[RMDB]
RNA sequence: GGGAACGACUCGAGUAGAGUCGAAAAUUAAGAAGUAUACCGCUAAUUUCCAGUCCUACAAAGAACUCUAUUAUUCAGAUCGUCGUCAGUGCGAAUUGAUCAAUUCGUUUUGUAGUACAGAGUUCAGGGUUGAGCGUGUAAAUUCCAACAAACAGCGAUUCUCUUCCUUCUUCGGAAGGAAGAGAAUAAAAGAAACAACAACAACAAC
Reactivity to DMS in 0.01 (KOAc 150mM, MgCl2 10mM, bicine 150mM(pH8.5), 24C), signal-to-noise 1, nucleotides 027 to 156: u010u010a080a080g030a040a150g000u010a170u010a070c090c030g020c030u000a070a060u000u000u000c070c010a110g000u000c050c030u000a210c110a110a060a160g030a010a030c000u010c030u000a060u010u000a210u000u000c040a090g020a050u000c030g000u010c300g020u000c050a080g030u000g020c140g000a090a070u000u020g030a050u000c100a000a130u000u010c030g030u010u000u000u000g030u000a080g010u000a060c110a080g030a030g010u000u000c000a170g050g090g010u000u000g050a120g040c080g000u000g000u000a040a070a120u000u000c050c000a060a140c080a060a040a100c070a100g010c090g000
Reactivity to 2A3 in 0.01 (KOAc 150mM, MgCl2 10mM, bicine 150mM(pH8.5), 24C), signal-to-noise 2, nucleotides 027 to 156: u180u170a060a010g050a070a010g080u070a070u040a090c020c020g000c050u060a120a110u050u080u150c050c000a030g010u030c000c000u040a110c090a070a210a020g010a000a000c000u000c000u060a120u230u020a080u130u180c060a070g050a110u060c020g020u000c000g050u050c070a050g070u080g170c000g050a010a000u060u100g020a040u080c090a030a050u060u050c010g020u020u050u090u120g030u030a050g030u010a030c040a060g000a010g000u020u020c030a020g000g000g020u000u070g030a020g000c030g000u060g010u120a000a030a100u090u010c020c030a030a000c030a050a190a010c030a020g130c060g080

Chemical mapping of a 207-nucleotide RNA with DMS and 2A3. Conditions: 150 mM KOAc, 10 mM MgCl2 and 150 mM bicine (pH 8.5), 24 C. It was measured as part of the RMDB library OK3TST. High DMS reactivity at an A or C suggests that its Watson-Crick edge is free. The 2A3 profile rests on 1,011 reads. The DMS profile rests on 1,964 reads.